[RMDB]
RNA sequence: GGGAACGACUCGAGUAGAGUCGAAAAGCGAUGGCCGUCAAACAUACACUUGAGAAUUCUGUGUGAGGGUACUGUAGCAUCGGGUUACUGUACACCAAUCCAGACGAUUCUCAGGUGGUUUGACGCCGUACGUAUGAUGCUUCGGCAUCAUACGUACAAAAGAAACAACAACAACAAC
Reactivity to DMS in 0.01 (KOAc 150mM, MgCl2 10mM, bicine 150mM(pH8.5), 24C), signal-to-noise 2, nucleotides 027 to 126: g020c120g000a080u020g010g020c010c060g020u000c000a000a030a000c030a060u000a300c010a010c000u000u000g000a050g010a010a010u000u000c060u000g020u000g000u000g000a300g000g000g000u000a010c000u000g010u000a020g010c010a260u000c130g010g000g020u000u000a000c000u000g010u000a000c000a130c010c010a020a120u000c000c000a020g000a080c300g000a090u000u000c000u000c000a020g000g010u000g000g010u000u000u000g000a000c030g000c000c000
Reactivity to 2A3 in 0.01 (KOAc 150mM, MgCl2 10mM, bicine 150mM(pH8.5), 24C), signal-to-noise 2, nucleotides 027 to 126: g100c060g130a140u120g000g030c110c040g020u010c000a000a000a020c000a030u300a060c010a000c010u010u010g000a000g010a010a020u180u030c000u010g220u050g010u000g150a000g000g000g020u000a000c010u030g000u000a000g030c020a040u230c170g300g000g000u000u000a000c000u000g000u070a010c300a210c030c000a000a000u000c000c000a000g030a030c070g070a030u000u000c000u010c010a010g000g010u000g000g020u000u000u010g000a000c000g010c000c020